An RNA of 177 nucleotides, treated with DMS and 2A3 and read out base by base. For 2A3 the reverse transcriptase was SuperScript II with manganese. The RNA was probed in 150 mM KOAc, 10 mM MgCl2 and 150 mM bicine (pH 8.5) at 24 C.
RNA sequence: GGGAACGACUCGAGUAGAGUCGAAAAGCUUAGCAGUUCGCUGCUAAGCGACGUUGACGGCCCUCACCGUUGACAAAUCCCAAUGAGGACAGGUGACUGUCAGAUAUUAAGCGUUCGCGCUUAAUAAAGUGCAUACUUGUUUCGACAAGUAUGCACUAAAAGAAACAACAACAACAAC
Reactivity to DMS in 0.01 (KOAc 150mM, MgCl2 10mM, bicine 150mM(pH8.5), 24C), signal-to-noise 2, nucleotides 027 to 126: g010c000u000u000a000g020c000a000g010u000u020c210g000c010u000g010c020u000a010a000g010c000g010a030c190g000u000u000g010a000c000g030g010c080c060c150u000c090a280c040c000g010u000u000g000a020c000a090a110a110u000c010c000c010a110a090u030g010a080g000g000a030c000a010g000g010u020g000a200c000u000g000u000c000a110g000a250u010a040u000u000a000a030g010c000g000u000u020c260g010c020g030c000u000u000a000a030u000a010a060
Reactivity to 2A3 in 0.01 (KOAc 150mM, MgCl2 10mM, bicine 150mM(pH8.5), 24C), signal-to-noise 2, nucleotides 027 to 126: g000c000u000u000a000g010c010a000g000u060u120c170g060c160u010g000c000u000a000a000g000c000g010a010c050g000u000u010g020a000c010g000g030c160c010c000u050c030a040c010c000g000u000u000g020a010c000a010a100a040u050c020c000c000a000a100u300g100a140g120g020a000c020a010g050g060u060g070a070c000u000g000u010c010a020g050a020u100a000u030u000a000a000g000c020g030u030u070c250g030c000g020c080u000u000a000a000u040a050a190
The 2A3 profile rests on 3,170 reads.